Structure probing data (DMS and 2A3) for a 177-nucleotide construct. The reactions ran in a buffer of 150 mM KOAc, 10 mM MgCl2 and 150 mM bicine (pH 8.5), at 24 C. For DMS the reverse transcriptase was MarathonRT. The data come from the RNA Mapping Database (RMDB), library RFMREP. The DMS profile rests on 1,029 reads.
RNA sequence: GGGAACGACUCGAGUAGAGUCGAAAACUGUUCUUUUCAGUUUAAUCUCUGAAAGUGUUCUAAGGAACACAACAUUGAUUAAUCUCAUUUUUGGAUCUCGUGGCAAGGCCUCUGUGCUUGCGCAUGCGACCGUCAGUAAGUUCGCUUACUGACGGUCAAAAGAAACAACAACAACAAC
Reactivity to DMS in 0.01 (KOAc 150mM, MgCl2 10mM, bicine 150mM(pH8.5), 24C), signal-to-noise 1, nucleotides 027 to 126: c040u000g000u000u020c120u000u010u000u000c030a050g000u000u000u000a010a000u000c010u010c030u010g030a040a160a180g030u000g010u000u000c000u010a100a150g040g010a010a010c000a020c000a030a300c020a000u000u000g000a000u000u000a030a070u000c010u020c060a250u000u000u000u000u020g020g000a110u020c040u000c050g050u000g000g000c010a040a020g030g020c010c040u000c160u000g060u010g000c020u010u000g000c070g000c030a030u020g010c200
Reactivity to 2A3 in 0.01 (KOAc 150mM, MgCl2 10mM, bicine 150mM(pH8.5), 24C), signal-to-noise 2, nucleotides 027 to 126: c010u010g030u100u100c080u070u190u110u100c040a000g000u000u010u010a010a010u010c010u000c000u020g110a130a080a110g060u010g000u000u010c000u090a180a270g150g000a030a010c010a000c000a020a050c000a010u070u030g010a010u040u030a030a050u000c020u000c080a110u090u100u080u180u150g090g020a070u030c020u020c080g020u020g020g000c000a050a040g250g060c030c010u090c190u200g060u170g060c020u050u010g000c120g050c060a020u050g040c000